[RMDB]
RNA sequence: GGGAACGACUCGAGUAGAGUCGAAAAAAUUGGAGCGUAAUCGCGUCUUGACGUGAGUGAGCCUAGACUGUAGGCUAUCCCAAGUGGGAUAGCAUAGCUCUCAAUACGCUGAUCUACAGUCAUACAAGUGGUGGAAAGCAUUCGUGCUUUCCACCACAAAAGAAACAACAACAACAAC
Reactivity to 2A3 in 0.01 (KOAc 150mM, MgCl2 10mM, bicine 150mM(pH8.5), 24C), signal-to-noise 1, nucleotides 027 to 126: a000a020u150u120g000g010a000g030c000g000u020a000a010u020c010g000c010g030u020c050u090u250g170a010c000g010u000g000a010g020u050g000a010g000c000c010u010a030g000a000c000u000g000u000a020g020g000c000u000a000u050c000c000c010a160a070g300u300g010g000g000a000u000a000g000c010a010u020a010g000c000u010c000u000c010a010a030u030a020c030g020c000u070g060a000u030c000u010a000c000a020g000u000c010a010u090a040c070a080a130
Reactivity to DMS in 0.01 (KOAc 150mM, MgCl2 10mM, bicine 150mM(pH8.5), 24C), signal-to-noise 1, nucleotides 027 to 126: a090a010u000u000g000g000a120g010c000g000u000a040a000u000c010g010c030g010u000c050u000u050g000a030c000g010u030g000a060g000u000g000a000g050c010c100u000a100g000a010c000u000g000u000a010g000g000c000u010a000u000c000c010c000a220a300g040u010g010g030g000a000u000a000g000c030a070u000a060g000c000u030c020u000c010a300a110u000a030c010g030c000u000g030a060u000c000u000a000c000a030g000u000c000a170u020a100c300a050a100